[RMDB]
RNA sequence: GGGAACGACUCGAGUAGAGUCGAAAAGGGACGCCUUUAGAAGAAGAGGCUAGGUGGUAUUCCGGUGUGGGAUACUUGGUAAUAUGUAACGCUAAUUGCAUAAGAUUGUAGGACGGACUUUACAGUCAAAACGGUCCUGCGUUCGCGCAGGACCGAAGGAGUAUGUACACUUCGGUGUACAUACUCCAAAAGAAACAACAACAACAAC
Reactivity to 2A3 in 0.01 (KOAc 150mM, MgCl2 10mM, bicine 150mM(pH8.5), 24C), signal-to-noise 2, nucleotides 027 to 156: g020g000g000a010c060g000c020c000u060u060u080a160g040a210a020g010a080a010g000a030g020g000c030u020a030g000g090u000g010g020u040a020u080u000c040c020g030g030u160g000u130g100g000g000a010u040a050c010u030u130g030g020u070a070a120u040a090u160g040u030a020a010c040g000c140u070a060a100u100u070g000c010a030u020a110a010g040a130u050u110g060u060a020g030g050a020c110g030g000a030c000u040u070u080a030c040a020g010u000c000a040a030a040a040c020g000g000u000c000c000u000g010c000g010u050u060c140g010c000g030c080a000g010g010a000c000c000g000a000a000
This 207-nucleotide RNA was probed chemically with 2A3. For 2A3, 1,215 sequencing reads were counted.